[RMDB]
RNA sequence: GGGAACGACUCGAGUAGAGUCGAAAAAUUGAGGGAUAAUACAGGCUCUCCCAUCCAACUCCUAUUCCAACACGUCCUCGUCGUACAGAGUGGUAACAUGUGUCACCAAAUAUCCAAGCUUGGGUACAAAAGCCAACUACGUUCGCGUAGUUGGCAACAAAGAGACUUUCUUCGGAAAGUCUCUUUGAAAAGAAACAACAACAACAAC
Reactivity to 2A3 in 0.01 (KOAc 150mM, MgCl2 10mM, bicine 150mM(pH8.5), 24C), signal-to-noise 3, nucleotides 027 to 156: a000u100u050g010a050g010g010g010a020u030a150a060u130a240c080a100g060g000c000u010c000u000c000c000c000a020u000c030c020a070a050c040u020c030c010u040a070u070u060c020c010a010a030c030a030c060g050u010c010c020u040c040g060u020c020g010u070a020c020a070g030a020g070u050g030g000u050a070a000c020a110u110g050u020g010u070c010a020c060c000a010a100a070u070a030u030c020c010a020a040g040c090u100u110g080g000g000u040a070c030a020a080a010a010g010c010c000a000a000c000u000a000c000g060u010u110c100g010c000g120u010a000g000u000u000g010g010c000a000a000
Reactivity to DMS in 0.01 (KOAc 150mM, MgCl2 10mM, bicine 150mM(pH8.5), 24C), signal-to-noise 2, nucleotides 027 to 156: a080u000u010g010a080g010g020g000a140u000a070a110u000a180c110a100g030g020c060u010c050u000c050c000c020a150u010c070c040a060a070c020u000c000c000u000a110u010u010c020c030a090a080c050a070c080g020u020c020c030u000c100g050u010c060g020u000a120c080a120g030a130g040u000g030g000u010a040a080c050a080u000g000u000g010u000c000a080c040c010a030a070a100u000a030u000c020c010a040a150g030c070u000u000g000g010g030u000a050c050a090a050a070a150g000c010c000a010a010c000u000a020c000g010u000u000c300g060c020g050u000a020g010u010u020g030g020c020a020a000